[RMDB]
RNA sequence: GGGAACGACUCGAGUAGAGUCGAAAAACAAUACUCACGGAAAAUAUCAAAAUGUUCUUGUCAUCGUCGAAACAUUACGUCGCGUCUAGCGUACAAAAUGAAAUAUCAUUGGCUGCGGGGGACACCAAUAGGACGUACUUUUAUGUGUCUAUAAAUGCAGCCAAUUAUCCUUCGGGAUAAUUGGCUGAAAAGAAACAACAACAACAAC
Reactivity to 2A3 in 0.01 (KOAc 150mM, MgCl2 10mM, bicine 150mM(pH8.5), 24C), signal-to-noise 1, nucleotides 027 to 156: a000c030a000a010u090a170c010u000c130a050c010g060g020a110a030a080a150u170a040u130c090a050a120a100a050u130g030u070u110c030u060u060g040u020c040a090u040c090g040u000c040g050a100a010a030c070a020u100u140a020c060g040u000c000g040c000g030u090c060u160a020g000c010g030u100a040c050a020a110a000a020u070g070a010a020a020u160a010u070c020a010u030u030g040g020c020u010g010c060g040g000g010g030g000a000c000a020c000c060a080a030u040a160g030g040a000c000g000u020a010c040u030u160u020u000a140u140g020u010g000u000c040u010a190u070a150a070a050u270g050